[RMDB]
RNA sequence: GGGAACGACUCGAGUAGAGUCGAAAAUCAAAGAGCGUACAGCACACUCAGACUGUACGACAGUCUGACACACACGUACGCUAGUCCAACGAGAGAGAGAGAGCGUUGGAACAAGUGUGAGAAAAAAAGGACUAGAAUCGUUCGCGAUUCUAGUCCUAAAAGAAACAACAACAACAAC
Reactivity to 2A3 in 0.01 (KOAc 150mM, MgCl2 10mM, bicine 150mM(pH8.5), 24C), signal-to-noise 1, nucleotides 027 to 126: u100c060a080a040a000g100a010g000c010g000u010a020c030a040g060c090a050c020a000c060u040c020a000g000a000c010u020g030u220a200c090g050a030c060a000g010u000c000u010g000a010c010a000c000a010c000a010c090g010u040a000c000g010c010u020a020g010u010c010c000a010a000c000g000a000g010a010g010a020g000a020g000a000g010a090g050c030g010u000u010g020g030a000a040c040a070a090g050u060g000u080g050a110g180a020a070a000a000a030a000

Chemical mapping of a 177-nucleotide RNA with 2A3.
For 2A3 the reverse transcriptase was SuperScript II with manganese.
The RNA was probed in 150 mM KOAc, 10 mM MgCl2 and 150 mM bicine (pH 8.5) at 24 C.